[RMDB]
Chemical mapping of a 177-nucleotide RNA with 2A3 and DMS. The DMS profile rests on 1,060 reads. 2A3 adducts were read by reverse transcription with SuperScript II with manganese. Source: RMDB library OK1LIB, as collected in RNAgym. The RNA was probed in 150 mM KOAc, 10 mM MgCl2 and 150 mM bicine (pH 8.5) at 24 C.

RNA sequence: GGGAACGACUCGAGUAGAGUCGAAAAGUCUCACGAGUGCAAAGACAAAGGUAGUUGACUCCGGUGCUACCAGUACUCGAAUGAAUGCGAAAGAGUUCAUGUAUUCCAACCGGAGAAGAACUCAAAACAUCCAUCCUCCGUUCGCGGAGGAUGGAUGAAAAGAAACAACAACAACAAC
Reactivity to 2A3 in 0.01 (KOAc 150mM, MgCl2 10mM, bicine 150mM(pH8.5), 24C), signal-to-noise 3, nucleotides 027 to 126: g040u020c000u010c030a020c010g000a000g010u000g000c010a040a300a050g090a120c070a040a080a010g080g000u010a020g010u000u000g050a090c000u000c010c000g000g000u000g000c000u000a000c000c020a000g000u010a000c000u000c010g000a010a040u170g050a020a030u140g020c110g040a100a120a180g050a050g010u000u000c040a040u170g090u190a170u260u170c050c040a040a030c000c000g000g040a000g000a000a030g000a020a000c000u010c000a000a000a000a000
Reactivity to DMS in 0.01 (KOAc 150mM, MgCl2 10mM, bicine 150mM(pH8.5), 24C), signal-to-noise 1, nucleotides 027 to 126: g040u010c000u000c010a300c010g010a050g040u000g000c000a040a060a220g000a070c300a270a180a050g010g000u000a000g000u000u000g000a030c090u020c000c000g000g040u000g000c000u000a000c000c000a190g000u000a010c000u020c000g000a120a000u000g000a180a040u010g150c010g010a230a100a070g000a050g010u000u000c000a190u060g010u000a180u060u040c140c120a130a020c020c020g000g010a000g110a210a030g000a020a000c000u000c020a070a080a150a100